[RMDB]
RNA sequence: GGGAACGACUCGAGUAGAGUCGAAAAUAGCGAAGUAGGAUUUUAUGCGUCAAGUGUUCACAGGCUGGGGAGUCGCCGUGAAACGAAAAGCAGAAAGCGUGCAGCUUACGAUAUAAUUUCCGCACCCAUAAGAAGUCUCUGUUCGCAGAGACUUCAAGUUAUCGUUUUAGUUCGCUAAAACGAUAACAAAAGAAACAACAACAACAAC
Reactivity to DMS in 0.01 (KOAc 150mM, MgCl2 10mM, bicine 150mM(pH8.5), 24C), signal-to-noise 1, nucleotides 027 to 156: u020a090g050c100g010a050a080g020u000a050g000g010a050u000u000u000u000a020u010g000c060g000u000c060a040a160g050u000g030u000u000c020a040c050a030g000g040c000u000g000g000g000g000a070g020u040c020g050c040c020g020u020g000a040a020a200c080g010a110a010a080a090g000c020a090g000a070a040a080g020c090g060u010g010c080a140g020c040u000u000a040c030g000a090u000a030u000a050a080u000u000u000c030c000g020c060a150c000c010c010a120u000a070a140g000a060a010g020u000c010u000c000u010g010u000u000c290g030c040a060g000a020g000a020c000u000u010c010a030a100
Reactivity to 2A3 in 0.01 (KOAc 150mM, MgCl2 10mM, bicine 150mM(pH8.5), 24C), signal-to-noise 7, nucleotides 027 to 156: u120a020g020c040g030a090a020g050u110a060g030g030a030u020u000u010u050a040u070g030c010g000u040c070a050a030g020u030g040u170u040c030a010c070a110g040g020c040u110g030g020g010g020a060g080u070c030g010c020c010g030u050g040a040a030a020c040g030a030a050a050a000g030c030a030g120a080a080a010g080c050g020u060g020c060a010g000c000u010u020a010c020g020a010u010a000u010a130a040u030u020u020c000c010g010c030a050c010c020c000a030u070a100a070g000a010a000g000u000c000u000c000u000g050u060u060c210g010c060a000g000a000g000a000c000u000u000c000a000a000
Description
The record gives the reactivity of an RNA of 207 nucleotides to DMS and 2A3. DMS (dimethyl sulfate) methylates the pairing face of unpaired adenines and cytosines. DMS adducts were read by reverse transcription with MarathonRT. The reactions ran in a buffer of 150 mM KOAc, 10 mM MgCl2 and 150 mM bicine (pH 8.5), at 24 C. For 2A3 the reverse transcriptase was SuperScript II with manganese.